An RNA of 207 nucleotides, treated with DMS and 2A3 and read out base by base. Values cover nucleotides 27 to 156. The DMS profile rests on 4,829 reads. The reactions ran in a buffer of 150 mM KOAc, 10 mM MgCl2 and 150 mM bicine (pH 8.5), at 24 C.
RNA sequence: GGGAACGACUCGAGUAGAGUCGAAAAGGAUUUGAGCUCAGCCAGGGGAAUGAAACGUUUCAUCAUCCGAACAAACUGUACAUCCACCUAUGUGACAACAGUGUACAUGACAGAAAGACGUGUCUAGGCUGACUGUGCCCACUGUAUUUUUAACCGCCCUCUCUCUAAAUUUCGAUUUAGAGAGAGGAAAAGAAACAACAACAACAAC
Reactivity to DMS in 0.01 (KOAc 150mM, MgCl2 10mM, bicine 150mM(pH8.5), 24C), signal-to-noise 3, nucleotides 027 to 156: g000g000a120u000u000u020g020a070g020c020u010c020a010g020c020c010a090g040g040g030g010a150a100u010g000a030a040a070c040g030u000u000u010c030a290u000c030a050u010c030c050g000a160a140c100a090a120a060c030u000g000u000a050c050a270u000c020c030a060c000c070u000a080u010g010u000g000a130c060a090a050c030a070g010u000g000u010a050c090a070u020g020a150c030a080g000a080a070a050g010a050c030g000u010g000u000c030u000a210g030g020c010u010g000a040c040u010g080u000g000c000c020c000a040c090u000g010u010a010u010u010u000u000u000a080a140c040c010g010c120
Reactivity to 2A3 in 0.01 (KOAc 150mM, MgCl2 10mM, bicine 150mM(pH8.5), 24C), signal-to-noise 5, nucleotides 027 to 156: g070g010a050u080u140u240g060a030g020c000u000c010a000g010c020c010a040g020g000g000g040a060a060u090g010a140a130a030c120g050u030u060u040c060a080u030c010a020u050c050c020g060a040a020c050a060a130a010c030u030g000u030a020c010a040u020c050c000a050c040c060u150a130u210g090u090g040a030c050a100a010c010a100g020u010g000u060a040c030a030u070g040a020c050a070g100a070a100a010g060a030c060g040u040g030u050c030u070a080g000g030c020u000g020a020c000u040g020u070g020c000c030c000a020c040u040g050u100a160u040u130u010u050u120a060a030c060c050g050c010
2A3 is a SHAPE reagent: it acylates the 2'-hydroxyl of flexible nucleotides of all four kinds. The 2A3 profile rests on 3,339 reads. For 2A3 the reverse transcriptase was SuperScript II with manganese. The data come from the RNA Mapping Database (RMDB), library OK3TST.